[RMDB]
RNA sequence: GGGAACGACUCGAGUAGAGUCGAAAAUCCACAGACCCCCCUCCUGCGGGGCACGCUGGCCUAAGAGACGUGGCACUGAGCCUCGGCUGUCGAGAGGGGACUUCCCACGGCCCGUGGACCUUUGUGCUGUACCUUUGUAAUUCGUUACAAAGGUACAAAAAGAAACAACAACAACAAC
Reactivity to 2A3 in 0.01 (KOAc 150mM, MgCl2 10mM, bicine 150mM(pH8.5), 24C), signal-to-noise 4, nucleotides 027 to 126: u000c000c010a040c010a020g170a110c040c020c010c020c000c000u000c000c000u010g000c010g010g000g010g000c000a010c040g090c110u060g070g040c010c020u140a200a070g170a030g030a180c100g110u060g000g020c010a020c170u070g000a010g010c020c000u030c010g160g070c040u060g040u110c090g000a040g010a050g080g000g010g000a010c010u010u030c000c000c020a060c050g170g010c020c040c030g000u020g010g030a050c010c020u180u180u200g210u090g100c080
Reactivity to DMS in 0.01 (KOAc 150mM, MgCl2 10mM, bicine 150mM(pH8.5), 24C), signal-to-noise 6, nucleotides 027 to 126: u000c020c010a060c090a120g000a180c010c010c000c000c020c010u000c010c020u000g000c050g010g000g010g010c030a040c050g010c080u010g020g020c010c010u010a110a120g010a200g010a110c230g020u010g010g010c010a080c080u010g000a140g000c010c010u000c020g010g010c030u000g010u010c120g000a050g020a050g010g000g000g000a040c040u000u000c020c000c000a130c110g010g010c040c030c060g010u010g010g000a110c170c050u000u010u010g020u010g010c160